[RMDB]
RNA sequence: GGGAACGACUCGAGUAGAGUCGAAAAGGUACGGGGAAUUAUCGUUUGAUUCCGGAGAGGGAGCCUGAGAGACGGCUACCAGGUCCAAGGACAGCAGCAGGCGCGAAAAUUACCGCAGCCUGCGUUCUGCACAGCAAUAUUUCGAUAUUGCUGUGCAAAAAGAAACAACAACAACAAC
Reactivity to DMS in 0.01 (KOAc 150mM, MgCl2 10mM, bicine 150mM(pH8.5), 24C), signal-to-noise 4, nucleotides 027 to 126: g020g010u030a070c070g000g000g000g020a070a050u010u030a050u020c170g030u010u020u010g000a070u010u010c020c030g000g010a100g000a230g020g000g000a030g000c010c010u000g020a150g010a130g020a190c140g000g000c000u000a090c020c010a100g000g000u020c020c010a110a090g000g000a030c080a110g000c110a100g000c000a010g000g000c000g000c000g010a060a070a070a110u050u040a100c140c020g000c010a120g050c000c010u000g000c000g000u010u010c050
Reactivity to 2A3 in 0.01 (KOAc 150mM, MgCl2 10mM, bicine 150mM(pH8.5), 24C), signal-to-noise 3, nucleotides 027 to 126: g070g010u060a040c080g000g030g000g060a030a150u100u060a080u170c050g070u020u070u120g070a090u070u040c030c000g010g030a050g020a040g020g000g000a010g020c000c010u020g040a030g010a000g030a020c120g000g000c000u050a130c000c000a030g000g090u020c010c000a020a000g040g000a010c000a050g000c030a020g000c000a010g040g000c000g020c010g050a050a040a030a110u240u090a040c050c000g000c010a030g040c000c000u000g000c000g000u020u000c020
The record gives the reactivity of an RNA of 177 nucleotides to DMS and 2A3. 2A3 adducts were read by reverse transcription with SuperScript II with manganese. Values cover nucleotides 27 to 126.